[RMDB]
RNA sequence: GGGAACGACUCGAGUAGAGUCGAAAAUCGGACGCUUCUGGAAUGGUUGUGAAAGUGCCCAAGUGCGUGUAUUGCCCACCGAUGCUACCGACAUAGCGCCGUCCAUUAGGCGCGACUGUGGCAUAUACUUACGCCCUUAGUUCGCUAAGGGCGUAAGAAAAGAAACAACAACAACAAC
Reactivity to 2A3 in 0.01 (KOAc 150mM, MgCl2 10mM, bicine 150mM(pH8.5), 24C), signal-to-noise 1, nucleotides 027 to 126: u030c000g090g040a010c030g020c060u080u040c000u240g000g070a170a040u140g100g100u100u070g010u050g140a160a060a000g060u060g080c000c000c000a020a070g020u050g060c030g000u040g040u100a130u050u220g010c050c000c010a030c010c030g030a000u000g000c020u010a010c000c040g070a060c110a170u130a030g010c010g000c000c020g030u040c090c030a080u160u170a090g010g010c010g000c000g010a010c000u010g020u050g000g000c040a010u140a000u010a220
Reactivity to DMS in 0.01 (KOAc 150mM, MgCl2 10mM, bicine 150mM(pH8.5), 24C), signal-to-noise 3, nucleotides 027 to 126: u000c050g010g010a210c100g000c010u000u000c030u000g010g030a100a090u010g000g000u010u010g040u000g010a040a090a120g010u000g010c050c010c010a090a070g010u010g020c030g010u000g010u020a090u000u000g000c020c010c040a240c120c100g000a050u000g010c040u000a110c040c090g010a080c110a070u010a130g030c010g010c000c010g000u020c140c110a140u000u020a130g000g010c000g020c010g020a030c150u000g020u020g040g010c010a030u000a100u000a110